[RMDB]
RNA sequence: GGGAACGACUCGAGUAGAGUCGAAAAUUCAGCUCCUGUGGAAUACACAUCAACCCUUGACAUAGUACUAAAUCCACUAACGAAUAAAAAUAAUCAAUUAGAUAAAGAAACAGUUAAGGCUUUGUUAUCACCAUCUACCACUUCUCACUUUAAUGUAACGACGUAUUACGUUCGCGUAAUACGUCGUAAAAGAAACAACAACAACAAC
Reactivity to 2A3 in 0.01 (KOAc 150mM, MgCl2 10mM, bicine 150mM(pH8.5), 24C), signal-to-noise 2, nucleotides 027 to 156: u150u090c070a070g000c030u010c040c060u040g000u030g000g060a080a080u090a100c060a010c010a060u040c030a010a130c000c000c000u030u020g020a030c020a070u040a070g050u090a000c020u120a140a100a080u070c070c030a050c020u130a140a010c070g030a050a040u150a070a080a010a000a050u240a060a080u100c020a020a040u050u150a100g050a070u300a090a200a070g120a100a070a050c040a070g020u040u240a040a000g000g000c030u110u070u090g060u080u020a030u090c000a050c020c020a040u010c010u080a070c020c040a030c060u140u100c070u080c080a070c070u090u230u250a170a090u230g100u140a000